This 207-nucleotide RNA was probed chemically with DMS and 2A3. The DMS profile rests on 2,268 reads. Source: RMDB library OK3TST, as collected in RNAgym. Reactivities are given for positions 27 through 156.
RNA sequence: GGGAACGACUCGAGUAGAGUCGAAAAUUCUUCCUCCUGCUCCAACAUGGAGCAGCUGCUGGCUCAGUCUGCAACUCAGCCUUCAUUCCGGGACAUUCACUAACGGCUCAGAAGAGGAGAAGUGACCUAGUGGGGAGAUCUAAAAGCUCAUGUUCCACAUUUUACGCAGUUUCGACUGCGUAAAAUGAAAAGAAACAACAACAACAAC
Reactivity to DMS in 0.01 (KOAc 150mM, MgCl2 10mM, bicine 150mM(pH8.5), 24C), signal-to-noise 1, nucleotides 027 to 156: u000u000c040u000u000c000c050u010c000c010u000g000c000u010c010c000a180a230c150a220u020g000g010a060g000c000a030g030c120u000g010c040u000g020g020c010u000c060a060g000u000c020u010g000c080a160a080c020u000c020a080g040c030c020u000u000c050a150u000u010c030c010g000g010g060a070c010a100u000u030c020a100c120u030a070a120c050g000g050c050u010c020a050g000a040a130g000a090g010g030a090g010a090a060g000u000g060a100c010c010u000a110g010u000g010g010g000g020a060g010a030u000c050u010a070a050a040a130g000c060u000c010a060u000g000u000u000c000c000a210
Reactivity to 2A3 in 0.01 (KOAc 150mM, MgCl2 10mM, bicine 150mM(pH8.5), 24C), signal-to-noise 4, nucleotides 027 to 156: u080u040c030u030u010c010c010u040c000c020u010g010c000u010c010c020a260a230c050a300u290g000g000a000g000c020a000g000c000u080g010c010u040g010g000c020u020c050a020g060u050c060u130g040c060a020a040c020u010c030a020g000c010c000u030u070c060a140u150u010c050c040g020g000g000a020c040a070u050u050c010a070c040u050a130a070c050g080g000c020u010c060a160g040a250a040g010a070g010g020a030g020a060a030g030u010g030a030c000c010u060a070g070u070g030g050g020g000a040g000a000u040c040u190a100a100a040a060g030c010u020c010a040u090g020u000u000c000c020a020